[RMDB]
RNA sequence: GGGAACGACUCGAGUAGAGUCGAAAAAAGUUUGUACAGCCAGCAUCUUCUUUCAGUCAGUGCGUGUCAGUAACUGCACAUGUCCUCUCAUUGGGAGAGCCUGUCGAAAGUCUAAGUUUGAAGGCAGCUGUGAAGGUAAGGCCAAUCCAAAUGGCUAGGUAAUGCCAUAGUUCGCUAUGGCAUUACCAAAAGAAACAACAACAACAAC
Reactivity to DMS in 0.01 (KOAc 150mM, MgCl2 10mM, bicine 150mM(pH8.5), 24C), signal-to-noise 1, nucleotides 027 to 156: a070a040g000u000u000u000g040u000a080c090a070g000c090c000a220g000c050a090u000c080u010u000c040u000u010u000c020a130g040u010c060a100g000u010g050c010g000u020g000u010c000a180g020u000a120a100c040u010g020c000a000c010a070u010g010u000c020c000u000c000u000c060a300u000u000g000g050g010a040g000a040g020c020c070u010g020u000c030g020a100a050a080g010u040c060u000a080a160g000u000u000u000g000a130a130g020g020c060a030g010c030u000g020u010g000a040a040g040g000u000a020a100g030g020c020c020a040a130u000c050c050a110a150a100u030g020g020c010u010a050
Reactivity to 2A3 in 0.01 (KOAc 150mM, MgCl2 10mM, bicine 150mM(pH8.5), 24C), signal-to-noise 2, nucleotides 027 to 156: a040a000g110u090u060u050g050u070a030c030a020g000c030c040a030g040c030a050u000c010u110u010c000u010u030u010c010a010g020u020c000a010g000u020g130c050g020u040g040u040c010a000g070u130a140a060c050u090g020c040a040c000a000u060g090u040c020c010u000c010u010c030a160u100u250g070g050g000a010g000a000g000c010c030u010g030u020c030g030a040a030a000g070u030c030u140a120a110g040u070u110u130g100a070a040g020g000c000a020g020c000u000g010u020g070a050a060g090g010u060a110a000g040g010c040c010a040a070u050c010c000a000a070a030u000g000g000c020u030a050